[RMDB]
This 207-nucleotide RNA was probed chemically with DMS and 2A3.
It was measured as part of the RMDB library OK3TST.
For DMS, 1,732 sequencing reads were counted.
The 2A3 profile rests on 1,695 reads.
2A3 adducts were read by reverse transcription with SuperScript II with manganese.
In probing experiments dimethyl sulfate is read out at A N1 and C N3, which are open when not base-paired.
RNA sequence: GGGAACGACUCGAGUAGAGUCGAAAAUUACAUCAGCUGAGGAAAUUGCUGACGCGGUGAAAAUCGGUCAAACUCAGGCAGACUUUACAGUCACUGUCAAUGGAAAUGACCUUGCUGGCGCUAGCCUUCUAGCAGCCUUCGAAGGCAAAUUGGAAGAUCAUACCGUCCAGUUCGCUGGACGGUAUGAAAAAGAAACAACAACAACAAC
Reactivity to DMS in 0.01 (KOAc 150mM, MgCl2 10mM, bicine 150mM(pH8.5), 24C), signal-to-noise 1, nucleotides 027 to 156: u000u010a060c040a130u010c000a090g050c030u000g060a170g020g020a010a080a100u010u000g010c000u010g040a020c070g030c030g090g000u010g010a200a000a040a100u000c060g010g000u000c020a080a120a200c080u000c060a020g030g050c040a170g030a080c030u000u000u010a110c130a080g010u000c000a130c040u000g010u000c020a180a100u000g000g020a030a140a250u010g000a120c000c020u000u000g030c030u000g020g020c030g000c030u000a070g040c130c030u010u000c010u020a030g010c030a150g020c010c010u000u000c060g010a080a050g030g000c000a030a060a030u010u000g030g000a030a050g000a190
Reactivity to 2A3 in 0.01 (KOAc 150mM, MgCl2 10mM, bicine 150mM(pH8.5), 24C), signal-to-noise 3, nucleotides 027 to 156: u100u070a060c010a050u030c020a010g010c030u080g030a040g020g100a070a150a140u160u110g090c040u020g010a020c010g010c010g160g000u040g050a060a060a040a050u040c040g000g010u050c050a020a040a050c090u040c050a020g050g000c000a000g070a080c000u160u220u210a130c120a040g000u010c030a010c060u020g020u030c020a050a140u070g090g030a050a070a120u080g010a020c000c000u010u010g000c020u010g000g000c000g000c030u000a010g020c000c060u090u060c020u030a030g030c080a030g020c000c000u020u060c040g060a030a010g000g000c030a070a040a150u080u050g020g010a020a030g040a090